Overview: Structure probing data (DMS) for a 177-nucleotide construct.

[RMDB]
RNA sequence: GGGAACGACUCGAGUAGAGUCGAAAAGAUAUGGAUUAAAGGGAGUUCACCCUUAGGGAGCUGAUGACUCGGAAACGAGUCAAUAGCAUCGAUCUAACAUGGGUGAACUCCCUUUAAUCCUAAGUCACUCUAGUCUUAAGUUCGCUUAAGACUAGAGAAAAGAAACAACAACAACAAC
Reactivity to DMS in 0.01 (KOAc 150mM, MgCl2 10mM, bicine 150mM(pH8.5), 24C), signal-to-noise 4, nucleotides 027 to 126: g010a050u010a300u000g020g000a020u000u000a000a020a020g000g010g010a040g010u000u000c000a010c000c010c010u000u010a010g000g000g000a040g020c020u010g010a150u010g000a020c010u010c000g000g000a170a130a240c000g020a040g010u000c000a000a060u000a020g010c000a300u010c240g020a040u010c000u000a020a090c300a150u010g000g010g010u000g000a010a010c000u000c010c000c010u000u000u000a000a000u000c010c000u000a010a020g000u000c040a170
It was measured as part of the RMDB library TTRINS. The DMS profile rests on 3,351 reads. Values cover nucleotides 27 to 126.